RNA sequence: GGGAACGACUCGAGUAGAGUCGAAAAGCCCAUAUGUUCGCAUAUGGGCAAAAGCAGAUCUGAGCAUGCGAGCUCUCUGCGACAAAUGUCAACGCAAUAAAAAAACACGUCACUUCGGUGACGUGAACCUGUGACCUGAGUUCGCUCAGGUCACAGGAAAAGAAACAACAACAACAAC
Reactivity to 2A3 in 0.01 (KOAc 150mM, MgCl2 10mM, bicine 150mM(pH8.5), 24C), signal-to-noise 1, nucleotides 027 to 126: g020c010c010c010a000u000a000u000g010u000u060c100g000c120a000u000a000u000g010g000g020c000a010a010a010a010g010c000a000g000a070u100c110u220g000a010g040c030a060u160g080c030g030a050g050c000u020c000u000c010u010g000c000g010a050c030a000a110a140u230g070u160c070a080a060c080g010c070a070a040u220a250a150a050a000a000a000a010c010a000c030g020u010c010a000c000u070u080c210g030g010u010g000a000c010g000u000g000a000a000
About this RNA
Structure probing data (2A3) for a 177-nucleotide construct. 2A3 adducts were read by reverse transcription with SuperScript II with manganese. The reactions ran in a buffer of 150 mM KOAc, 10 mM MgCl2 and 150 mM bicine (pH 8.5), at 24 C.